[RMDB]
RNA sequence: GGGAACGACUCGAGUAGAGUCGAAAAGAUUCCUCGUUGUUGAGCGAGGUUUAAACAAAUCGACCACACAAACGUAGUGCCGACUACGGAUUUAUAAAUUAAGGCAUUAAGUGUGAUAAGGAGACAAAAAACGAUGUUGUGUUCGCACAACAUCGAAGCUAUAGGUAGACUUCGGUCUACCUAUAGCAAAAGAAACAACAACAACAAC
Reactivity to 2A3 in 0.01 (KOAc 150mM, MgCl2 10mM, bicine 150mM(pH8.5), 24C), signal-to-noise 6, nucleotides 027 to 156: g110a100u170u130c000c000u010c000g000u000u010g010u000u010g010a010g000c010g000a000g000g020u050u120u020a020a010a010c060a000a000a010u010c000g000a000c000c010a000c000a000c000a020a170a000c000g000u010a000g000u000g040c000c000g050a020c000u010a000c000g020g010a010u020u300u030a200u130a040a010a010u100u110a010a000g000g000c000a010u100u220a140a050g000u000g000u010g030a000u020a020a050g180g040a070g020a060c150a050a190a000a010a020a010c020g000a000u000g000u000u020g000u000g010u030u030c170g060c080a000c010a010a000c000a000u000c000g000a010a010
Reactivity to DMS in 0.01 (KOAc 150mM, MgCl2 10mM, bicine 150mM(pH8.5), 24C), signal-to-noise 3, nucleotides 027 to 156: g000a300u000u000c000c000u000c060g050u000u000g020u000u000g020a130g010c020g010a080g000g020u000u000u000a060a080a210c140a080a090a090u000c040g030a080c010c010a090c010a210c030a120a100a120c030g000u000a020g000u000g010c050c030g020a220c080u000a120c070g010g010a140u000u000u000a070u010a060a060a100u000u000a080a300g000g000c000a160u000u000a020a060g020u000g020u000g020a050u020a050a040g000g010a300g040a090c070a020a080a060a080a090a140c030g000a010u000g000u010u040g020u010g000u010u000c250g000c020a030c000a000a010c010a000u000c000g000a040a060

The record gives the reactivity of an RNA of 207 nucleotides to 2A3 and DMS. For DMS the reverse transcriptase was MarathonRT. Source: RMDB library M2RFPK, as collected in RNAgym. The RNA was probed in 150 mM KOAc, 10 mM MgCl2 and 150 mM bicine (pH 8.5) at 24 C.